[RMDB]
RNA sequence: GGGAACGACUCGAGUAGAGUCGAAAAGAUAUGGAUCGACCCAGCGCGCGAAGAACUAAGUCGGAAACGACUUAGGGAGCAAACGCUGCGAUCCUAAGUCAAAUCCUAAGCGUUCGCGCUUAGGAAAGAGGAUACUAUGGUUCGCCAUAGUAUCCUCAAAAGAAACAACAACAACAAC
Reactivity to 2A3 in 0.01 (KOAc 150mM, MgCl2 10mM, bicine 150mM(pH8.5), 24C), signal-to-noise 3, nucleotides 027 to 126: g010a000u040a010u100g000g000a000u000c010g060a180c060c120c050a000g000c020g010c020g000c050g200a300a140g020a010a100c000u000a000a000g000u010c000g010g000a050a040a030c010g000a000c000u000u010a000g000g020g000a040g020c090a300a110a020c010g010c010u020g000c020g000a000u000c000c010u010a100a010g040u000c040a090a050a140u020c000c000u000a000a000g010c010g050u060u210c300g020c000g000c100u020u000a010g000g000a020a020a020
Reactivity to DMS in 0.01 (KOAc 150mM, MgCl2 10mM, bicine 150mM(pH8.5), 24C), signal-to-noise 4, nucleotides 027 to 126: g000a040u010a250u000g010g000a020u000c000g020a250c210c300c070a010g030c010g030c020g030c300g020a040a100g010a260a290c010u000a020a020g020u010c000g010g000a070a070a080c000g020a010c000u010u000a000g020g000g010a150g000c030a040a150a050c010g000c010u000g000c010g010a010u000c000c010u000a030a060g000u000c030a070a100a180u010c000c000u000a000a000g010c010g020u000u000c230g000c000g010c000u000u000a000g000g000a010a030a050